An RNA of 177 nucleotides, treated with DMS and 2A3 and read out base by base.
Reactivities are given for positions 27 through 126.
The RNA was probed in 150 mM KOAc, 10 mM MgCl2 and 150 mM bicine (pH 8.5) at 24 C.
For 2A3 the reverse transcriptase was SuperScript II with manganese.
DMS adducts were read by reverse transcription with MarathonRT.
The data come from the RNA Mapping Database (RMDB), library OK1LIB.
RNA sequence: GGGAACGACUCGAGUAGAGUCGAAAACGAUGGUGCGGUAGUAUGUAAGCACUGGAUUGUCGAGACUGAACGUAUGCUCGAAGAUGCCGGGUAUGUCCACGGCUGGGAAGGAGACUUUGCGUACAUGCGACAUACCCGAAUUCGUUCGGGUAUGUCGAAAAGAAACAACAACAACAAC
Reactivity to DMS in 0.01 (KOAc 150mM, MgCl2 10mM, bicine 150mM(pH8.5), 24C), signal-to-noise 3, nucleotides 027 to 126: c050g040a060u010g000g010u000g000c100g010g000u010a040g000u040a050u020g010u030a080a160g010c040a050c030u010g000g000a040u020u000g000u000c000g000a110g000a110c090u030g000a090a150c200g000u030a050u010g010c010u020c030g000a040a120g010a050u010g000c110c000g000g000g000u020a080u000g000u020c020c010a120c080g000g020c060u000g000g000g010a090a070g000g030a130g000a080c080u000u000u010g020c050g030u000a040c080a050u020g010
Reactivity to 2A3 in 0.01 (KOAc 150mM, MgCl2 10mM, bicine 150mM(pH8.5), 24C), signal-to-noise 4, nucleotides 027 to 126: c050g010a040u150g050g000u020g030c010g060g050u080a090g040u020a180u170g210u100a100a010g010c020a010c020u020g020g100a130u060u110g060u010c010g000a000g010a130c050u080g040a100a030c070g060u110a060u150g000c010u000c020g010a020a020g010a000u090g070c020c020g000g020g000u080a050u220g030u040c010c020a160c070g040g000c030u040g040g030g020a010a100g060g030a070g010a030c050u060u080u100g050c030g010u030a060c000a090u130g050